[RMDB]
RNA sequence: GGGAACGACUCGAGUAGAGUCGAAAAGAUAUGGACUAGAACUACAGCGUGUUCGCAUCGAUCGUCAGGUUAUAUCGGAAACGAUAUAACCUGACGGGAGCGGUCAGCACGCUGCUAGUCCUAAGUCGAACCAAUUGAAGUUCGCUUCAAUUGGUUCAAAAGAAACAACAACAACAAC
Reactivity to DMS in 0.01 (KOAc 150mM, MgCl2 10mM, bicine 150mM(pH8.5), 24C), signal-to-noise 3, nucleotides 027 to 126: g010a080u020a300u020g010g010a020c000u000a000g000a080a040c090u050a300c000a010g000c020g030u000g010u010u010c190g030c100a040u010c020g000a130u010c000g030u000c000a010g020g000u000u020a000u010a000u020c000g000g000a140a100a190c000g010a020u000a000u000a000a000c000c000u020g000a000c000g010g010g000a150g010c020g010g010u000c120a040g000c000a020c000g020c000u000g010c060u000a010g000u010c000c000u000a000a090g020u010c140
Reactivity to 2A3 in 0.01 (KOAc 150mM, MgCl2 10mM, bicine 150mM(pH8.5), 24C), signal-to-noise 3, nucleotides 027 to 126: g120a050u160a100u290g010g010a000c000u010a000g020a090a160c200u240a080c300a000g000c010g000u000g070u100u160c170g060c150a150u170c050g080a150u090c010g010u000c010a000g000g000u010u000a010u000a000u000c000g000g050a100a060a040c020g000a000u010a010u000a020a000c000c000u010g000a000c000g000g000g000a100g070c010g000g040u080c030a020g000c000a010c050g000c000u000g020c000u000a010g000u070c000c010u020a080a020g050u030c130